[RMDB]
RNA sequence: GGGAACGACUCGAGUAGAGUCGAAAAACGCCAACACGCGGCGUGGUGGGGCAGGGUGGUGACCACACACCGGGCACCGUACCGCCAUCGGGCCCGCGGGUGCGGUAGGCGUGGCCGGGUCACCACUGUAAAUACAAUGUUUCGACAUUGUAUUUACAAAAGAAACAACAACAACAAC
Reactivity to 2A3 in 0.01 (KOAc 150mM, MgCl2 10mM, bicine 150mM(pH8.5), 24C), signal-to-noise 7, nucleotides 027 to 126: a000c030g010c010c000a080a040c120a040c160g120c090g020g020c040g020u040g010g060u160g000g010g010g030c050a070g070g020g000u020g000g000u010g010a020c010c010a040c020a010c000a020c120c000g000g020g010c060a060c050c000g050u040a030c000c020g030c040c000a030u050c010g060g040g020c010c020c020g040c030g020g010g010u050g010c010g000g020u020a040g040g030c110g030u020g010g090c020c010g070g000g000u000c010a010c010c000a010c020u000
Reactivity to DMS in 0.01 (KOAc 150mM, MgCl2 10mM, bicine 150mM(pH8.5), 24C), signal-to-noise 9, nucleotides 027 to 126: a050c050g020c010c010a100a140c160a110c190g010c110g010g010c020g010u000g000g010u010g000g000g000g020c120a090g000g010g020u000g000g010u000g010a040c000c050a140c130a080c140a100c250c010g000g010g010c020a040c000c010g010u000a040c020c020g000c060c070a060u000c030g010g010g000c020c030c040g010c070g010g010g010u000g010c010g000g010u000a040g010g000c120g010u000g010g000c030c020g010g000g000u000c010a020c000c010a030c040u000

Structure probing data (2A3 and DMS) for a 177-nucleotide construct. The reactions ran in a buffer of 150 mM KOAc, 10 mM MgCl2 and 150 mM bicine (pH 8.5), at 24 C. Values cover nucleotides 27 to 126. It was measured as part of the RMDB library OK2TRN. For 2A3, 45,863 sequencing reads were counted. For 2A3 the reverse transcriptase was SuperScript II with manganese.